An RNA of 177 nucleotides, treated with 2A3 and DMS and read out base by base.
RNA sequence: GGGAACGACUCGAGUAGAGUCGAAAAUGGUGCCCGUUCGCGGGCACCACCUCGUGGUUACGGCCACGUUAAAUAGUUGCUUAAGCCCUAAGCGUUGAUAAAGAUGCGCGAAAUUCGUUUCGCGCAAUCUAACCAUGUAAUUCGUUACAUGGUUAGAAAAAGAAACAACAACAACAAC
Reactivity to 2A3 in 0.01 (KOAc 150mM, MgCl2 10mM, bicine 150mM(pH8.5), 24C), signal-to-noise 7, nucleotides 027 to 126: u060g010g000u000g010c020c050c000g020u030u050c230g010c010g080g000g000c000a000c000c000a000c000c000u000c010g000u010g000g020u050u100a090c210g100g000c000c000a000c000g000u000u000a010a010a020u180a020g150u080u180g000c010u050u020a130a060g040c010c020c040u020a020a010g020c030g100u100u250g070a150u160a150a090a040g130a100u070g000c000g000c000g020a010a010a030u080u080c180g040u020u000u000c000g000c010g000c010a000a000
Reactivity to DMS in 0.01 (KOAc 150mM, MgCl2 10mM, bicine 150mM(pH8.5), 24C), signal-to-noise 9, nucleotides 027 to 126: u010g010g020u000g020c000c000c010g040u000u010c190g020c010g020g010g020c000a000c010c000a010c030c020u000c010g020u000g000g000u000u000a090c210g020g000c010c000a000c000g000u000u010a020a030a050u010a070g010u010u010g010c020u000u000a050a160g000c100c100c060u000a050a050g010c030g020u010u000g000a110u010a070a090a090g000a130u000g010c000g010c000g000a010a010a040u000u010c200g010u000u000u000c000g010c000g010c000a000a010
Reactivities are given for positions 27 through 126. The RNA was probed in 150 mM KOAc, 10 mM MgCl2 and 150 mM bicine (pH 8.5) at 24 C.